[RMDB]
RNA sequence: GGGAACGACUCGAGUAGAGUCGAAAAAUUCUGAAAAACGGACAAGAGCCAUUUAAUUCUGGGAUGUACAGGUAUUCUUGCAACUGCAUCUGCAGCCGUUGGUUUGAUUUGGACUGUUUGGGAUGCAACUCACAUUCCCUUUCGAGGGAAUGUGAGUAAAAGAAACAACAACAACAAC
Reactivity to DMS in 0.01 (KOAc 150mM, MgCl2 10mM, bicine 150mM(pH8.5), 24C), signal-to-noise 1, nucleotides 027 to 126: a160u020u000c030u000g010a080a040a020a050a040c100g010g000a140c020a050a090g000a100g000c030c000a050u000u030u000a060a180u000u000c030u020g020g010g000a030u000g020u000a100c070a050g000g000u010a060u070u000c050u000u030g040c050a100a060c140u000g000c010a030u000c010u000g020c040a020g010c230c080g020u000u000g000g010u000u010u020g020a170u000u000u000g010g010a100c020u000g000u000u000u000g000g000g000a040u000g000c030a120
Conditions: 150 mM KOAc, 10 mM MgCl2 and 150 mM bicine (pH 8.5), 24 C. This 177-nucleotide RNA was probed chemically with DMS. For DMS the reverse transcriptase was MarathonRT.